[RMDB]
RNA sequence: GGGAACGACUCGAGUAGAGUCGAAAAUAGUGUCACGAACAUCUGCGAUGGUCUUGAUGUUAGUCACGCAGUCUCUACUAUAGACUUCGGUUCUGGCCGAGUCGUGACUACCCGCGUCGGUCGAAACUAUGUCCUUGACUGUGACAUCUGAGACUUCCCUAGCACAUUCCUUCGGGAAUGUGCUAGGAAAAGAAACAACAACAACAAC
Reactivity to 2A3 in 0.01 (KOAc 150mM, MgCl2 10mM, bicine 150mM(pH8.5), 24C), signal-to-noise 2, nucleotides 027 to 156: u110a020g020u010g050u090c040a020c150g060a040a010c040a040u010c020u060g000c060g300a300u110g100g060u060c040u080u180g090a080u120g040u120u080a020g000u010c000a010c010g000c010a010g010u000c010u060c010u040a130c010u020a030u040a110g030a090c090u030u030c030g030g060u040u000c040u080g300g300c000c000g000a010g030u010c000g000u000g000a000c050u090a150c000c000c000g040c020g130u100c060g000g030u000c000g030a020a020a020c050u010a030u040g000u000c000c000u080u090g120a180c300u050g110u140g030a000c010a000u000c030u090g010a010g030a050c000u060u090c000
An RNA of 207 nucleotides, treated with 2A3 and read out base by base.